Source information:
This 177-nucleotide RNA was probed chemically with DMS. Source: RMDB library OK2TST, as collected in RNAgym.

RNA sequence: GGGAACGACUCGAGUAGAGUCGAAAAAGAGUCAAGACCCAUCAGUGUUCUGUAUUCAGGAAACCCAUCUCACAUGCAGCGACACACAUAGGCUCAAAAUAAAGGGAUGGAAGAUCUACCAAGCAAAAAUCAAUGGCACAUUCGUGUGCCAUUGAUUAAAAGAAACAACAACAACAAC
Reactivity to DMS in 0.01 (KOAc 150mM, MgCl2 10mM, bicine 150mM(pH8.5), 24C), signal-to-noise 1, nucleotides 027 to 126: a080g020a040g000u020c000a170a040g000a260c000c010c000a090u010c130a080g020u000g000u000u000c000u000g020u000a020u000u000c190a130g000g000a040a070a080c170c020c010a080u000c010u010c020a230c230a040u050g010c060a030g000c300g000a000c020a040c030a080c130a110u000a150g000g000c010u000c030a050a100a040a040u000a050a060a140g000g000g000a000u000g000g000a110a050g000a060u000c120u000a040c160c070a090a110g020c300a010a040a120

DMS adducts were read by reverse transcription with MarathonRT.
The reactions ran in a buffer of 150 mM KOAc, 10 mM MgCl2 and 150 mM bicine (pH 8.5), at 24 C.